[RMDB]
RNA sequence: GGGAACGACUCGAGUAGAGUCGAAAAACAGCAGGGCAUGGAUGAAGUCCUGCGGGAUGUCGGCGAAGCGGAUCGGCGUCCGGCGCAUCUCGCCGAACUCGGAGAUCAGCUUGCCGUCCUCGCUGUAUUCCCGGACUAAAUUCGUUUAGUCCGGGAAAAAAGAAACAACAACAACAAC
Reactivity to DMS in 0.01 (KOAc 150mM, MgCl2 10mM, bicine 150mM(pH8.5), 24C), signal-to-noise 4, nucleotides 027 to 126: a080c070a080g020c030a030g000g000g000c000a140u030g000g000a100u010g020a110a110g000u010c010c000u000g000c000g010g010g000a060u010g010u010c020g000g010c000g010a030a000g010c000g020g020a030u010c010g010g030c180g020u000c020c010g010g000c000g010c300a230u020c230u040c000g000c000c000g030a030a010c010u000c050g010g000a260g000a010u000c020a050g000c000u010u010g000c000c000g010u010c000c020u000c060g010c040u000g000u010a170
Reactivity to 2A3 in 0.01 (KOAc 150mM, MgCl2 10mM, bicine 150mM(pH8.5), 24C), signal-to-noise 6, nucleotides 027 to 126: a000c020a000g020c000a000g000g030g000c030a040u140g060g090a080u110g120a150a030g030u020c010c000u000g000c000g000g010g000a060u060g030u070c010g000g000c100g060a030a010g000c010g020g010a030u010c020g050g040c040g090u020c020c000g010g010c010g000c030a110u100c090u090c070g000c000c010g010a030a010c020u020c050g100g060a120g000a050u020c010a010g010c000u020u020g000c010c000g000u000c000c000u010c020g050c010u030g010u080a120
Structure probing data (DMS and 2A3) for a 177-nucleotide construct. Source: RMDB libraries RFM100 and RFMREP, as collected in RNAgym. The RNA was probed in 150 mM KOAc, 10 mM MgCl2 and 150 mM bicine (pH 8.5) at 24 C. Reactivities are given for positions 27 through 126.